Chemical mapping of a 177-nucleotide RNA with DMS.
The reactions ran in a buffer of 150 mM KOAc, 10 mM MgCl2 and 150 mM bicine (pH 8.5), at 24 C.
It was measured as part of the RMDB library OK2TRN.
[RMDB]
RNA sequence: GGGAACGACUCGAGUAGAGUCGAAAAAUCGAAGAAGGGUAAAGUCUUAUUGUUGGAACCCACAAGACCGUUGGCUGAAAAUGUGAGCAAGCAACUUGCGAAAGAUCCAUUCUAUCAGCAAGUAACGGGGAUGAUAAGGUUUCGACCUUAUCAUCCCAAAAGAAACAACAACAACAAC
Reactivity to DMS in 0.01 (KOAc 150mM, MgCl2 10mM, bicine 150mM(pH8.5), 24C), signal-to-noise 1, nucleotides 027 to 126: a030u000c040g010a080a110g000a050a040g000g010g020u000a100a060a090g000u000c000u020u000a090u020u000g010u050u000g010g010a110a090c010c000c000a110c220a110a100g040a140c100c010g000u000u000g000g000c030u020g000a070a030a160a070u000g020u000g000a060g010c150a020a140g030c050a180a050c110u000u000g030c000g000a030a090a160g040a060u000c160c090a060u000u000c050u000a050u020c000a150g000c000a080a070g000u020a040a020c190g030